[RMDB]
RNA sequence: GGGAACGACUCGAGUAGAGUCGAAAAGGAAGGCCAAUUAAGGUUAAUUGGAACCAACCUUGGAAGGUUAAGGUUGGUUAAGGCCUUAAGGUUCCGGUUCCAAUUCCGGUUGGAAUUGGCCUUGGAACAAGGGAUGUGCAUUCGUGCACAUCCCUUGAAAAGAAACAACAACAACAAC
Reactivity to DMS in 0.01 (KOAc 150mM, MgCl2 10mM, bicine 150mM(pH8.5), 24C), signal-to-noise 2, nucleotides 027 to 126: g010g000a030a020g000g010c000c000a020a150u000u000a120a120g000g010u000u010a020a080u010u020g000g000a020a020c010c000a050a050c060c050u000u000g030g020a110a080g010g000u000u010a040a030g000g010u000u010g010g030u000u010a070a070g000g010c000c010u010u000a030a030g010g000u000u020c080c070g020g010u000u000c010c010a010a010u000u010c040c050g000g000u000u000g020g010a020a020u000u000g000g000c190c000u000u000g020g010a120a110
Reactivity to 2A3 in 0.01 (KOAc 150mM, MgCl2 10mM, bicine 150mM(pH8.5), 24C), signal-to-noise 1, nucleotides 027 to 126: g080g000a010a000g000g000c000c000a000a020u060u040a150a020g080g000u060u300a060a050u100u020g040g030a000a000c020c020a030a040c000c000u010u020g090g100a080a050g100g020u140u100a010a000g070g040u070u020g030g010u050u100a030a080g060g010c020c000u000u000a010a000g020g010u060u000c020c000g000g000u020u000c000c020a000a010u060u020c000c020g060g080u070u180g160g080a020a000u010u000g000g000c000c010u000u050g020g000a050a000